[RMDB]
Chemical mapping of a 177-nucleotide RNA with 2A3 and DMS. DMS adducts were read by reverse transcription with MarathonRT. Reactivities are rounded to 0.1 and cut off at 0 and 3. It was measured as part of the RMDB library OK1LIB.
RNA sequence: GGGAACGACUCGAGUAGAGUCGAAAACAAACAACAUGCCAUAAUGUAGGGAAGAAGAGAAAGAGACGGUACCUGCAGAAGAAGCGCCGACUUACAACGUAACAGCAGACGAAUCAUGGCAUGAAAAGCAACGCUACGUCUUCGGACGUAGUGUUGCAAAAGAAACAACAACAACAAC
Reactivity to 2A3 in 0.01 (KOAc 150mM, MgCl2 10mM, bicine 150mM(pH8.5), 24C), signal-to-noise 6, nucleotides 027 to 126: c030a010a090a010c050a030a000c010a030u000g000c010c000a010u020a040a020u040g030u020a030g040g050g020a080a060g040a120a050g060a060g080a040a220a000g110a000g010a040c030g030g010u020a050c000c010u020g000c010a010g050a150a000g040a020a020g050c040g010c010c020g040a090c010u020u040a030c050a150a030c080g060u090a060a050c020a050g050c020a040g050a090c030g050a020a010u050c020a030u010g000g000c010a000u030g020a060a030a010a000
Reactivity to DMS in 0.01 (KOAc 150mM, MgCl2 10mM, bicine 150mM(pH8.5), 24C), signal-to-noise 4, nucleotides 027 to 126: c070a090a070a100c220a050a130c030a000u010g000c040c000a020u000a120a080u030g010u000a000g000g000g020a140a220g000a100a030g000a100g000a090a110a050g000a170g000a130c060g000g040u010a150c010c000u000g020c040a030g010a080a070g010a160a040g030c010g010c000c000g000a080c080u050u010a040c180a030a060c140g020u000a020a100c090a080g000c100a070g000a080c080g000a090a020u030c080a040u000g000g000c030a010u000g000a040a020a040a150